[RMDB]
RNA sequence: GGGAACGACUCGAGUAGAGUCGAAAACUGAGUAACCCCGCGAGGCAUUAAAAUUUUAAUGCGGAUCGCAGAAAGGUUUUUAUUGGUGACGGAAAUAAUAUAAGGCGUUGCGGCUGUCAGAUCGCGAGCAACUGUAAUUUCGCUGGCUGUAUCAGUAUGCUAGUACUAGUUUCGACUAGUACUAGCAAAAAGAAACAACAACAACAAC
Reactivity to DMS in 0.01 (KOAc 150mM, MgCl2 10mM, bicine 150mM(pH8.5), 24C), signal-to-noise 1, nucleotides 027 to 156: c010u010g010a210g080u000a030a230c030c000c050c030g010c020g050a150g000g020c020a060u000u000a000a020a240a220u000u000u020u000a000a110u000g010c010g050g020a140u000c030g020c010a050g000a100a140a280g020g010u010u030u000u010u000a060u010u000g030g010u020g000a190c040g000g000a110a130a110u010a090a030u000a100u000a010a170g020g010c030g000u010u000g020c010g020g070c030u010g060u000c020a050g030a110u010c080g030c030g030a200g030c000a050a060c030u000g080u020a100a100u010u000u000c050g000c030u000g030g000c030u010g020u020a070u000c010a070g000u010a200